Overview:
The record gives the reactivity of an RNA of 207 nucleotides to 2A3. The RNA was probed in 150 mM KOAc, 10 mM MgCl2 and 150 mM bicine (pH 8.5) at 24 C. It was measured as part of the RMDB library OK3TST. For 2A3, 815 sequencing reads were counted.
RNA sequence: GGGAACGACUCGAGUAGAGUCGAAAAUCAACACCAGCAACAGCCCACACACCGUUCUCAGCAAACACCAAGAGUGAAGCACCUAGUACGUGGAGCUUACGGAUGUUGUGAGCAUCAGGGAUACGAACAACACCACCGUCAGUGUCGAGGAGAUCACCCCUUCUCUGGAAUUCGUUCCAGAGAAGGGAAAAGAAACAACAACAACAAC
Reactivity to 2A3 in 0.01 (KOAc 150mM, MgCl2 10mM, bicine 150mM(pH8.5), 24C), signal-to-noise 1, nucleotides 027 to 156: u050c020a000a070c000a020c050c020a000g020c010a010a060c020a150g000c000c020c000a040c000a000c000a030c020c020g040u070u000c050u030c020a070g060c040a020a100a050c070a000c000c050a060a080g090a070g160u110g030a040a060g010c000a010c000c000u000a040g020u210a050c040g030u040g000g120a010g000c000u060u030a020c040g110g000a110u020g010u190u000g000u050g060a000g010c010a020u050c060a040g000g090g000a020u020a100c050g000a070a050c070a020a000c010a040c030c040a010c010c010g000u020c060a000g000u060g080u160c070g040a040g010g070a090g020a020u040c030a030c000